[RMDB]
RNA sequence: GGGAACGACUCGAGUAGAGUCGAAAAGAUAUGGACCCACUGCAGGGAAUCGCGACUCGGAAACGAGUCGAACUACGAUCUGUUGGGUCCUAAGUCAAACGACUAUCAUGGUUCGCCAUGAUAGUCGCUCGAAACAGUACUUCGGUACUGUUUCGAGAAAAGAAACAACAACAACAAC
Reactivity to 2A3 in 0.01 (KOAc 150mM, MgCl2 10mM, bicine 150mM(pH8.5), 24C), signal-to-noise 2, nucleotides 027 to 126: g020a000u000a000u070g010g000a020c030c000c030a000c090u070g010c200a280g070g170g300a300a140u030c000g000c000g040a000c000u000c000g000g000a010a020a020c000g000a000g010u010c010g000a000a010c020u200a090c000g000a020u010c060u080g170u300u060g160g000g000u010c000c010u000a020a000g000u020c030a090a080a110c070g010a000c010u000a000u000c000a000u010g000g100u130u080c300g030c090c000a000u030g000a000u010a010g010u010c010g000
Reactivity to DMS in 0.01 (KOAc 150mM, MgCl2 10mM, bicine 150mM(pH8.5), 24C), signal-to-noise 1, nucleotides 027 to 126: g000a030u000a030u010g000g000a020c010c000c010a040c140u000g030c300a190g000g000g000a180a030u010c000g000c000g000a020c000u000c000g020g020a010a030a020c030g010a000g020u000c020g000a000a010c230u000a300c000g000a010u000c060u010g000u030u000g020g000g000u000c000c000u000a000a030g000u010c010a080a100a250c020g010a020c000u000a000u000c000a000u000g000g020u010u010c270g010c010c000a000u000g020a000u000a020g000u000c010g000
Structure probing data (2A3 and DMS) for a 177-nucleotide construct.
2A3 adducts were read by reverse transcription with SuperScript II with manganese.
Conditions: 150 mM KOAc, 10 mM MgCl2 and 150 mM bicine (pH 8.5), 24 C.